[RMDB]
Chemical mapping of a 177-nucleotide RNA with DMS and 2A3.
RNA sequence: GGGAACGACUCGAGUAGAGUCGAAAAAGCGCGGGGCUGCUGGUGGUGGUGGAGGAGGAUGAAGUUCGCCAUUCAAACAACCCUUUCUGCACCGGUCCUGUGCUGCCCGUUGCCUGCAGGAGCAAAAUCGUUUCAUUCUUUUCGAAGAAUGAAACGAAAAAGAAACAACAACAACAAC
Reactivity to DMS in 0.01 (KOAc 150mM, MgCl2 10mM, bicine 150mM(pH8.5), 24C), signal-to-noise 5, nucleotides 027 to 126: a030g010c010g020c010g010g010g000g000c020u030g000c130u010g000g010u010g000g020u020g010g020u010g000g010a040g000g020a110g010g000a190u010g000a060a060g020u000u010c070g020c080c040a110u010u000c030a040a060a160c100a090a200c120c010c010u000u000u020c020u000g010c010a040c020c020g000g000u000c000c010u000g000u010g000c010u000g000c000c010c010g010u020u000g000c030c020u010g000c090a050g000g000a100g010c100a050a050a090a110
Reactivity to 2A3 in 0.01 (KOAc 150mM, MgCl2 10mM, bicine 150mM(pH8.5), 24C), signal-to-noise 8, nucleotides 027 to 126: a000g010c010g000c020g020g010g010g000c030u090g020c030u050g050g030u030g010g110u040g010g040u070g030g050a030g010g010a020g020g010a040u070g020a050a020g050u070u070c050g050c060c020a050u050u040c040a050a130a100c030a050a100c010c000c030u010u050u030c020u040g020c010a010c000c010g000g050u170c000c000u010g000u010g000c010u020g010c010c000c000g020u050u070g020c000c030u080g030c050a060g010g090a070g040c030a010a010a000a110